Chemical mapping of a 177-nucleotide RNA with DMS. Conditions: 150 mM KOAc, 10 mM MgCl2 and 150 mM bicine (pH 8.5), 24 C. DMS adducts were read by reverse transcription with MarathonRT. The DMS profile rests on 3,975 reads.
RNA sequence: GGGAACGACUCGAGUAGAGUCGAAAAGAUAUGGAUUGAUGGCUGCUGGAGAUCAUUCGGGUUUCUGUGUCGGAAACGACACAGAAACUUGGAUGAUCGUUGAAAGCAGCCCGCUCAAUCCUAAGUCCACAAUAGGAAGCUUCGGCUUCCUAUUGUGAAAAGAAACAACAACAACAAC
Reactivity to DMS in 0.01 (KOAc 150mM, MgCl2 10mM, bicine 150mM(pH8.5), 24C), signal-to-noise 2, nucleotides 027 to 126: g000a080u010a300u010g010g000a010u010u000g000a000u000g000g000c000u000g000c010u020g010g010a080g010a000u000c000a010u010u010c010g030g000g000u000u000u000c010u000g000u010g020u000c010g000g010a150a080a270c000g010a010c000a000c000a000g000a010a000a010c000u000u000g000g010a000u000g000a010u000c010g010u000u010g020a170a140a030g000c000a010g010c010c020c000g010c000u000c010a020a010u000c000c000u010a020a100g000u010c030